[RMDB]
RNA sequence: GGGAACGACUCGAGUAGAGUCGAAAAGGGGUCUAAUUGUCAGUACACUACCUCGCUUGGAUUUAAUACUGAAGCCUCCACGGUAUUUGUCAGCGAGAUGUGUACUUGGAUUUAUUAGACGGAGGCACCCAAAGUUGUAUGGUUCGCCAUACAACAAGACUUCGACAAAGUUCGCUUUGUCGAAGUCAAAAGAAACAACAACAACAAC
Reactivity to 2A3 in 0.01 (KOAc 150mM, MgCl2 10mM, bicine 150mM(pH8.5), 24C), signal-to-noise 2, nucleotides 027 to 156: g040g000g020g010u040c000u000a010a000u010u060g030u010c020a000g010u000a000c000a000c000u030a020c000c000u000c000g010c030u060u140g160g020a010u300u300u140a040a010u020a010c030u000g140a280a110g030c040c080u070c100c020a010c020g000g000u000a000u000u030u060g020u030c000a000g010c000g000a000g000a010u000g000u000g000u010a010c000u000u050g020g000a030u120u280u200a020u070u000a020g010a000c010g020g050a030g010g080c050a070c000c000c000a050a110a000g000u010u000g010u010a010u000g000g050u050u010c160g080c130c000a000u030a000c000a000a000c000a000a020
Conditions: 150 mM KOAc, 10 mM MgCl2 and 150 mM bicine (pH 8.5), 24 C. Structure probing data (2A3) for a 207-nucleotide construct. 2A3 adducts were read by reverse transcription with SuperScript II with manganese.